Source information
Structure probing data (DMS and 2A3) for a 177-nucleotide construct. The DMS profile rests on 2,463 reads. For 2A3, 761 sequencing reads were counted. Reactivities are given for positions 27 through 126. 2A3 adducts were read by reverse transcription with SuperScript II with manganese.
RNA sequence: GGGAACGACUCGAGUAGAGUCGAAAAUUUUUUCUUUGUGGUGAAAAAGCUAGUUGCAUGUCUAGACAAAAAUUUAGGUCCAUAGGGUCUGAAGGGAUGGGGAGAAUUUCUUUCAGGUGGGAGGGAAUGUAGGUUAGCUUUUCGAAGCUAACCUACAAAAAGAAACAACAACAACAAC
Reactivity to DMS in 0.01 (KOAc 150mM, MgCl2 10mM, bicine 150mM(pH8.5), 24C), signal-to-noise 1, nucleotides 027 to 126: u010u020u010u000u000u010c040u010u020u020g000u020g020g030u030g020a040a070a060a030a060g000c040u010a040g020u020u000g030c110a050u040g010u010c020u020a020g020a120c120a030a020a010a030a080u010u030u010a030g010g000u000c020c020a180u020a200g000g020g010u020c060u020g010a080a050g000g000g000a110u050g020g030g020g000a190g030a080a100u010u030u000c000u000u000u010c100a030g000g010u000g000g010g010a150g020g000g020a010a020
Reactivity to 2A3 in 0.01 (KOAc 150mM, MgCl2 10mM, bicine 150mM(pH8.5), 24C), signal-to-noise 2, nucleotides 027 to 126: u100u050u000u000u030u000c100u030u150u100g030u070g000g000u090g100a000a000a140a000a000g020c020u020a020g010u030u120g200c150a070u130g140u140c020u000a020g000a120c120a000a130a010a030a040u170u240u150a000g010g010u000c000c120a140u120a100g060g000g000u000c040u040g110a050a050g150g000g030a090u160g000g000g050g010a010g000a010a110u000u050u090c030u070u050u040c030a020g020g040u040g090g000g050a180g000g000g000a000a050